[RMDB]
RNA sequence: GGGAACGACUCGAGUAGAGUCGAAAACGUCAAGGAUUCGUCCUUGACGAAAGUCGCGGCUUGAGGGCGUAUACGGCUGCGCACACACACGACCCUCAAGCCAAACAGGUGGAUUCGUCCACCUGAAGAUCAGUUCAAGGUUCGCCUUGAACUGAUCAAAAGAAACAACAACAACAAC
Reactivity to DMS in 0.01 (KOAc 150mM, MgCl2 10mM, bicine 150mM(pH8.5), 24C), signal-to-noise 2, nucleotides 027 to 126: c020g000u000c010a010a010g020g010a040u010u010c150g050u000c000c000u000u010g000a000c000g010a020a040a070g030u010c070g010c210g010g000c000u000u000g000a030g000g000g000c020g020u000a100u020a140c190g010g010c060u000g000c100g020c100a040c100a060c170a090c090a040c020g010a110c010c000c000u010c000a010a010g010c010c010a010a020a160c010a010g010g020u000g000g000a020u010u010c180g020u000c000c000a000c000c000u010g000a030a080
Reactivity to 2A3 in 0.01 (KOAc 150mM, MgCl2 10mM, bicine 150mM(pH8.5), 24C), signal-to-noise 3, nucleotides 027 to 126: c000g000u030c000a000a000g030g010a020u060u110c210g060u020c060c000u010u000g010a000c010g000a010a000a000g070u050c040g000c110g140g000c010u000u000g010a000g000g010g010c020g030u020a060u040a060c070g060g000c040u130g090c090g030c020a050c000a000c000a000c010a010c110g300a300c010c000c000u000c000a000a000g000c000c000a000a000a000c000a000g000g000u010g000g020a010u020u060c190g060u030c060c000a000c010c000u000g010a020a000